[RMDB]
RNA sequence: GGGAACGACUCGAGUAGAGUCGAAAACUCUGAUUCGUCAGAGAAGAGAGCGUACUACCGAGCGACGAUCACGCGACAGUCGAUAAGUCCCAAAUAGGACUUUUGACGACUGUCGCUGUGGGAGCUCGGUAUCGCAAUGAUGGAAGUUCGCUUCCAAGUUUCUGCAUUAAUUCGUUAAUGCAGAAACAAAAGAAACAACAACAACAAC
Reactivity to 2A3 in 0.01 (KOAc 150mM, MgCl2 10mM, bicine 150mM(pH8.5), 24C), signal-to-noise 4, nucleotides 027 to 156: c010u000c010u000g020a020u050u080c220g030u000c130a010g010a010g040a220a010g170a010g010a010g030c020g000u110a120c090u010a000c050c000g000a000g000c000g170a200c010g020a040u020c000a000c010g000c010g010a000c000a000g010u000c000g020a030u010a060a000g010u020c040c030c060a150a190a110u260a110g000g000a000c000u040u040u060u190g170a040c010g010a000c000u000g000u000c010g000c000u000g000u000g000g000g000a000g000c000u000c000g000g000u000a000u010c000g000c020a000a040u190g130a080u110g010g000a020a030g010u050u150c150g080c130u000u000c010c010a010a010
Reactivity to DMS in 0.01 (KOAc 150mM, MgCl2 10mM, bicine 150mM(pH8.5), 24C), signal-to-noise 2, nucleotides 027 to 156: c010u000c000u010g020a020u000u010c270g040u000c010a050g000a030g010a120a080g010a180g000a180g000c030g020u000a060c140u000a010c000c000g000a060g020c010g010a100c120g010a120u000c000a050c020g000c020g000a010c000a010g010u000c000g040a170u000a020a020g010u000c000c000c040a030a140a260u020a050g000g010a010c010u000u010u000u010g010a200c050g000a010c010u000g010u000c000g000c000u010g070u000g020g000g000a290g000c000u000c000g000g000u000a000u000c020g010c000a140a080u000g010a190u010g020g000a040a170g010u000u000c170g030c000u000u000c000c000a070a300
An RNA of 207 nucleotides, treated with 2A3 and DMS and read out base by base. The RNA was probed in 150 mM KOAc, 10 mM MgCl2 and 150 mM bicine (pH 8.5) at 24 C.